Chemical mapping of a 177-nucleotide RNA with 2A3 and DMS. In probing experiments dimethyl sulfate is read out at A N1 and C N3, which are open when not base-paired.
[RMDB]
RNA sequence: GGGAACGACUCGAGUAGAGUCGAAAACCUUGCCGAUGGCGGCGAUGCGGCCGUUCUUGAGCGCGAGGUCGGCCUUGACGAUGCCCCAGUGGUCGAGGAUCAGGGCAUUGGUGAUGACGGUGUCGGCAUGAUCAACGUUCUUCGGAACGUUGAUCAUAAAAGAAACAACAACAACAAC
Reactivity to 2A3 in 0.01 (KOAc 150mM, MgCl2 10mM, bicine 150mM(pH8.5), 24C), signal-to-noise 3, nucleotides 027 to 126: c000c020u020u090g000c010c000g030a020u040g040g180c020g000g000c030g000a050u150g080c070g030g010c000c020g030u060u080c030u030u150g100a250g100c140g010c100g140a020g000g010u010c010g000g000c000c000u040u130g040a050c020g010a000u010g000c010c000c010c050a140g070u060g060g040u040c080g130a160g060g030a020u030c050a020g000g000g000c000a010u000u030g170g000u100g030a110u100g030a030c020g060g300u010g010u000c000g000g000c020
Reactivity to DMS in 0.01 (KOAc 150mM, MgCl2 10mM, bicine 150mM(pH8.5), 24C), signal-to-noise 2, nucleotides 027 to 126: c010c010u000u020g020c000c020g000a030u000g000g000c000g000g060c020g020a120u080g020c130g020g000c010c020g000u000u010c020u000u020g010a150g050c240g020c060g000a040g010g010u010c000g010g060c000c010u000u030g000a090c010g000a020u000g010c010c000c010c300a120g030u020g010g030u000c010g010a120g010g000a010u000c080a210g000g010g000c000a050u000u010g010g000u000g000a080u000g010a010c020g010g000u000g000u000c020g000g020c020

Source information: Values cover nucleotides 27 to 126. DMS adducts were read by reverse transcription with MarathonRT.